[RMDB]
RNA sequence: GGGAACGACUCGAGUAGAGUCGAAAAGUAAAUACGCUGUGUUCCUCUCAAAGCCUUUCUUAAGUCUGCAAGUAAAAGAGAGCUGUUUUUCUGUGGAUAUGAUCUGACCUCUCGUAGGACACUUAGCGCUUUCCACUAUGUGCUGUGCUUAUGUAGAAUGAUUACCUCAUUUCGAUGAGGUAAUCAUAAAAGAAACAACAACAACAAC
Reactivity to 2A3 in 0.01 (KOAc 150mM, MgCl2 10mM, bicine 150mM(pH8.5), 24C), signal-to-noise 7, nucleotides 027 to 156: g060u060a020a100a100u170a070c040g000c040u030g020u030g030u090u060c030c010u010c020u020c050a080a070a060g030c030c010u100u110u080c050u130u170a090a090g050u030c060u070g060c070a070a060g010u130a040a070a090a010g060a010g010a010g010c050u070g120u040u060u010u030u040c030u050g030u050g030g030a030u060a090u220g090a070u040c040u060g100a110c000c010u030c010u020c050g060u080a040g020g030a020c010a010c040u050u130a020g020c010g000c040u040u030u000c020c010a040c030u070a090u130g030u030g020c020u020g020u030g010c000u040u040a060u140g080u070a050g070a150
Reactivity to DMS in 0.01 (KOAc 150mM, MgCl2 10mM, bicine 150mM(pH8.5), 24C), signal-to-noise 5, nucleotides 027 to 156: g010u000a070a080a100u000a060c070g030c020u000g020u010g010u000u020c010c010u000c030u000c050a100a090a120g010c040c040u010u000u000c060u000u010a060a120g020u000c040u000g000c060a080a110g010u000a060a070a050a080g000a090g010a060g010c040u000g010u010u000u010u000u000c040u010g030u000g030g020a120u000a080u000g000a070u000c060u010g010a110c050c020u000c040u000c060g030u000a080g000g010a100c010a030c050u010u000a040g020c010g010c070u000u000u000c030c030a090c060u000a080u000g000u000g020c030u010g040u000g000c040u000u000a080u010g030u000a130g020a130
Notes: An RNA of 207 nucleotides, treated with 2A3 and DMS and read out base by base. The reactions ran in a buffer of 150 mM KOAc, 10 mM MgCl2 and 150 mM bicine (pH 8.5), at 24 C. Source: RMDB library OK3TST, as collected in RNAgym.